[RMDB]
RNA sequence: GGGAACGACUCGAGUAGAGUCGAAAAGCGUAUACCCUUUCAUGUGGGGUGGAGCCUACUGCUUCUGCGACUCCGAGAACACGCAGCUUAGCGAGGCCUAUGUCGACAGGUCUGACAUUUGCAAACAUACUAAUGACUAUUUCGAUAGUCAUUAGUAAAAAGAAACAACAACAACAAC
Reactivity to 2A3 in 0.01 (KOAc 150mM, MgCl2 10mM, bicine 150mM(pH8.5), 24C), signal-to-noise 9, nucleotides 027 to 126: g020c020g010u090a040u070a100c000c010c000u020u120u120c230a210u190g050u180g080g010g000g010u030g030g020a030g010c010c000u050a100c040u100g030c000u020u030c010u040g020c010g060a080c040u010c070c070g080a050g030a130a040c060a010c080g010c020a020g000c050u060u070a010g010c020g040a020g020g000c000c010u070a070u110g120u050c020g030a050c050a090g040g080u020c050u040g020a020c020a090u070u070u120g030c050a070a070a030c020a070
Reactivity to DMS in 0.01 (KOAc 150mM, MgCl2 10mM, bicine 150mM(pH8.5), 24C), signal-to-noise 9, nucleotides 027 to 126: g010c040g020u010a160u010a140c020c010c000u000u000u010c200a120u010g020u010g000g000g000g020u000g010g010a160g010c030c050u000a080c110u010g010c020u000u000c030u000g010c040g010a110c060u000c050c040g010a140g000a100a080c130a100c040g010c030a070g010c150u000u000a060g020c040g010a070g000g010c010c030u000a040u010g010u010c070g010a100c120a070g010g010u000c030u000g010a070c060a070u000u000u000g010c090a090a080a090c200a160